[RMDB]
RNA sequence: GGGAACGACUCGAGUAGAGUCGAAAAGAUAUGGAUGCAGAACUACUUGGGGAGCUUCGUUGAAAACUCGCUAAUCGGAAACGAUUAGCGAGUUGGAGAAGUGAAAGACAAGCUGCAUCCUAAGUCACCGAAUAUAAUUGUUCGCAAUUAUAUUCGGAAAAGAAACAACAACAACAAC
Reactivity to 2A3 in 0.01 (KOAc 150mM, MgCl2 10mM, bicine 150mM(pH8.5), 24C), signal-to-noise 3, nucleotides 027 to 126: g030a030u080a030u150g000g020a000u010g000c030a010g050a210a170c120u210a020c000u300u030g030g030g030g120a080g040c000u020u000c020g080u140u130g090a130a170a020a020c000u000c000g000c010u010a020a000u000c000g010g040a100a020a020c010g000a010u010u010a000g000c000g000a000g000u010u000g000g010a010g000a000a000g020u070g120a240a130a050g300a030c000a010a000g000c000u000g010c010a000u000c000c010u020a020a010g010u000c020a010
Reactivity to DMS in 0.01 (KOAc 150mM, MgCl2 10mM, bicine 150mM(pH8.5), 24C), signal-to-noise 4, nucleotides 027 to 126: g000a040u000a300u010g000g000a020u000g000c000a000g010a130a070c090u030a300c030u000u000g010g020g020g020a300g010c000u000u000c010g010u000u000g010a270a090a020a010c000u000c000g000c000u000a010a010u000c000g010g000a080a100a180c000g010a030u000u000a000g010c000g000a010g000u010u000g000g000a100g000a020a010g010u010g000a100a120a150g000a150c050a010a020g000c000u000g010c000a010u000c000c000u000a010a080g000u010c050a300